[RMDB]
RNA sequence: GGGAACGACUCGAGUAGAGUCGAAAAUUCAGCAAAGACAGCAGGAAGCACAGGGUUCGGUGAUGAAUUCUCACGUGCAGGUACCUCUUCAGUAGAAAAAUUCAAUAAGGUUUCUGACACUUUCUACCUAUGGGCCAGUUACAUACAGAAGAGAAAAAGUCGUAAUAAUAUUCGUAUUAUUACGACUAAAAGAAACAACAACAACAAC
Reactivity to DMS in 0.01 (KOAc 150mM, MgCl2 10mM, bicine 150mM(pH8.5), 24C), signal-to-noise 2, nucleotides 027 to 156: u020u000c030a120g010c050a020a120a120g000a120c040a070g010c020a080g010g000a130a100g000c060a100c050a130g000g010g000u000u010c030g000g020u000g020a160u000g010a040a040u010u000c030u000c030a080c050g040u010g030c070a090g010g050u010a040c040c010u000c030u000u000c030a100g000u000a070g010a020a030a050a100a120u000u000c060a070a080u000a090a140g010g010u010u000u010c040u000g010a090c030a070c020u000u000u000c020u000a070c050c070u000a060u000g020g020g030c030c050a040g030u010u000a040c050a110u000a070c030a140g010a070a030g000a080g010a050a070a090a170
Reactivity to 2A3 in 0.01 (KOAc 150mM, MgCl2 10mM, bicine 150mM(pH8.5), 24C), signal-to-noise 3, nucleotides 027 to 156: u080u030c010a000g000c040a120a070a010g050a070c040a020g040c010a020g030g060a060a060g050c020a040c050a050g030g000g030u090u070c060g040g030u070g040a070u070g020a030a070u140u060c030u010c030a010c050g040u070g020c020a010g050g000u050a070c000c010u030c030u070u040c070a040g020u020a030g210a040a080a030a020a070u220u130c050a010a100u130a140a060g060g010u070u070u090c050u070g050a020c000a010c050u080u090u080c030u060a040c010c010u060a080u070g010g040g000c010c000a000g020u100u050a030c010a020u090a020c040a020g030a050a000g040a060g000a090a030a010a030

An RNA of 207 nucleotides, treated with DMS and 2A3 and read out base by base.
For DMS the reverse transcriptase was MarathonRT.